RNA sequence: GGGAACGACUCGAGUAGAGUCGAAAACGGCGUUCACGGCCAAAAGGGCGUGAUGAACGGCAGCGAAGAUUUGACCGAGUGGAUGGCCGAGGACGGUACUAGCGCGCAAAUUUGCCUUUCGCCCAUCUCCUACCUGUCGCGCCAGUCCAACUUUGACUACUAACUCAUCAUUCGUGAUGAGUUAGUAAAAAGAAACAACAACAACAAC
Reactivity to DMS in 0.01 (KOAc 150mM, MgCl2 10mM, bicine 150mM(pH8.5), 24C), signal-to-noise 2, nucleotides 027 to 156: c050g040g000c020g000u000u000c010a100c040g030g020c000c010a050a080a150a150g000g000g020c000g000u000g050a100u000g000a100a070c070g000g010c070a060g000c080g050a130a090g010a200u000u010u010g000a070c060c040g010a140g030u000g020g000a150u010g000g000c040c000g000a130g020g030a080c060g050g030u000a100c050u000a140g000c070g010c030g020c050a060a060a160u010u000u010g040c020c010u000u010u000c000g010c000c010c020a100u010c030u000c030c050u000a050c090c030u000g020u010c020g010c030g080c010c020a090g020u000c030c020a050a110c050u000u010u000g000a130c110
Reactivity to 2A3 in 0.01 (KOAc 150mM, MgCl2 10mM, bicine 150mM(pH8.5), 24C), signal-to-noise 4, nucleotides 027 to 156: c030g050g010c010g020u010u010c030a030c050g060g060c020c000a110a170a070a100g030g020g020c060g010u060g030a140u080g090a100a010c030g050g000c010a020g020c050g070a070a020g030a190u140u090u160g100a140c050c040g010a020g030u060g010g050a040u000g020g020c020c000g010a020g050g020a010c050g000g030u030a050c060u070a080g050c090g000c000g000c110a030a110a140u100u070u150g010c010c000u070u100u040c020g000c020c010c000a020u020c040u050c020c000u040a090c010c030u050g060u100c020g000c000g000c020c010a020g060u040c010c010a020a060c040u050u030u070g030a030c040
Record summary
This 207-nucleotide RNA was probed chemically with DMS and 2A3. As a SHAPE reagent, 2A3 marks flexible, mostly unpaired nucleotides at the ribose 2'-OH. Source: RMDB library OK3TST, as collected in RNAgym. For 2A3 the reverse transcriptase was SuperScript II with manganese. The DMS profile rests on 4,819 reads. The reactions ran in a buffer of 150 mM KOAc, 10 mM MgCl2 and 150 mM bicine (pH 8.5), at 24 C.